[RMDB]
RNA sequence: GGGAACGACUCGAGUAGAGUCGAAAAGUGGACGCUGCCUGGCCAGCGGCAGUCCGCGCUGCGCGUCAGGAACGGCGCCACCCGCGCCGUACGCGUUAUCUGGCGCGCCGGCCGGCGCGCUUCGCGAACGUAGGGAUUACUUCGGUAAUCCCUACGUAAAAGAAACAACAACAACAAC
Reactivity to DMS in 0.01 (KOAc 150mM, MgCl2 10mM, bicine 150mM(pH8.5), 24C), signal-to-noise 1, nucleotides 027 to 126: g040u000g000g010a100c040g000c040u000g060c010c010u010g000g010c000c030a300g010c010g020g060c260a080g030u000c010c020g010c030g060c200u000g010c010g000c070g000u010c050a080g000g000a130a000c070g010g000c010g010c000c100a110c190c060c110g000c010g010c080c000g020u000a020c100g000c100g000u000u010a130u020c080u000g000g010c070g050c000g090c120c300g060g000c100c080g040g050c050g000c070g000c100u000u000c060g000c060g000a150

Record summary
Structure probing data (DMS) for a 177-nucleotide construct. The reactions ran in a buffer of 150 mM KOAc, 10 mM MgCl2 and 150 mM bicine (pH 8.5), at 24 C.